[RMDB]
RNA sequence: GGGAACGACUCGAGUAGAGUCGAAAAAACUCAGCUAGGGAGAGUAUAACAUUCAUGUUGACGAGACCUAGACGAAACACAGAGGAAAAUUAUUAAUCACUGGAUAGUAUUAUUAAUGACUCUGUGUAAAACUCUUCUACGUUCGCGUAGAAGAGAAGCCAUUCAUAAGGUUCGCCUUAUGAAUGGCAAAAGAAACAACAACAACAAC
Reactivity to 2A3 in 0.01 (KOAc 150mM, MgCl2 10mM, bicine 150mM(pH8.5), 24C), signal-to-noise 2, nucleotides 027 to 156: a000a000c000u000c020a000g030c000u000a000g000g040g010a040g020a020g090u110a110u090a300a020c050a050u100u190c100a100u250g020u030u050g040a040c060g030a000g070a080c000c000u000a020g000a030c020g030a000a050a000c000a000c000a000g010a000g000g040a060a050a140a060u000u000a000u000u010a020a010u030c040a000c040u060g040g050a100u300a300g010u010a000u010u010a000u000u010a000a000u000g020a020c000u000c000u000g000u000g000u010a010a000a000a000c000u000c000u000u000c000u000a000c010g040u010u050c220g020c000g090u000a000g010a000a010g000a000g000a000a000
Reactivity to DMS in 0.01 (KOAc 150mM, MgCl2 10mM, bicine 150mM(pH8.5), 24C), signal-to-noise 1, nucleotides 027 to 156: a020a070c070u020c020a070g010c020u000a010g000g030g010a260g000a230g030u000a040u000a030a090c000a080u000u000c150a090u000g000u000u000g000a150c030g000a240g020a060c010c040u000a000g000a300c170g000a140a060a060c000a010c020a000g010a050g000g000a060a100a100a060u010u010a000u000u000a010a000u000c080a090c150u010g020g030a170u000a080g030u000a090u000u000a040u000u010a010a010u000g000a210c010u000c000u000g030u030g010u000a010a020a030a120c000u000c000u000u000c000u000a010c000g000u000u010c300g020c000g040u040a010g010a050a020g000a020g020a010a130